Conditions: 150 mM KOAc, 10 mM MgCl2 and 150 mM bicine (pH 8.5), 24 C. An RNA of 207 nucleotides, treated with DMS and 2A3 and read out base by base. The 2A3 profile rests on 1,977 reads.
RNA sequence: GGGAACGACUCGAGUAGAGUCGAAAACGCACGGCGACCAGGACGCCGUCACCGACGCCGUUCAAGGCGCACGCAAGAGACCAAUCAGGGACGCCGGUGGUUGGGGAUACGACCGCCGCGACCCGACCGCAUCCAUCUAUCCGCUAGUCGCUGUGACACCUACUACUUUCUUCGGAAAGUAGUAGGUAAAAGAAACAACAACAACAAC
Reactivity to DMS in 0.01 (KOAc 150mM, MgCl2 10mM, bicine 150mM(pH8.5), 24C), signal-to-noise 1, nucleotides 027 to 156: c100g030c040a070c040g060g000c030g000a030c010c000a170g010g020a110c060g020c060c000g000u000c000a030c110c000g040a030c020g030c000c000g000u000u000c170a190a150g050g000c030g060c030a030c080g040c090a140a190g020a140g030a110c050c080a070a060u010c060a140g010g010g010a230c060g010c110c120g070g000u000g010g000u010u040g040g000g040g030a160u010a080c060g010a030c040c040g030c010c000g010c010g000a090c010c000c020g010a020c040c090g040c100a080u010c030c010a140u020c040u010a020u000c010c000g010c060u000a130g010u000c010g000c000u000g000u000g000a160c110
Reactivity to 2A3 in 0.01 (KOAc 150mM, MgCl2 10mM, bicine 150mM(pH8.5), 24C), signal-to-noise 3, nucleotides 027 to 156: c050g020c000a010c000g000g000c010g030a020c010c050a080g000g020a010c030g010c040c000g000u030c030a170c030c120g070a060c010g010c040c010g030u110u140c100a060a060g030g010c020g030c030a070c050g070c030a070a090g050a000g020a130c030c060a030a100u100c070a110g010g000g020a010c030g100c210c200g020g010u020g000g000u000u030g030g030g000g050a050u120a300c020g020a010c000c000g000c000c000g000c000g020a050c000c000c000g000a010c010c030g030c030a020u070c000c000a050u000c030u140a080u060c020c010g010c040u000a020g020u030c000g010c020u010g030u020g030a010c000
2A3 adducts were read by reverse transcription with SuperScript II with manganese.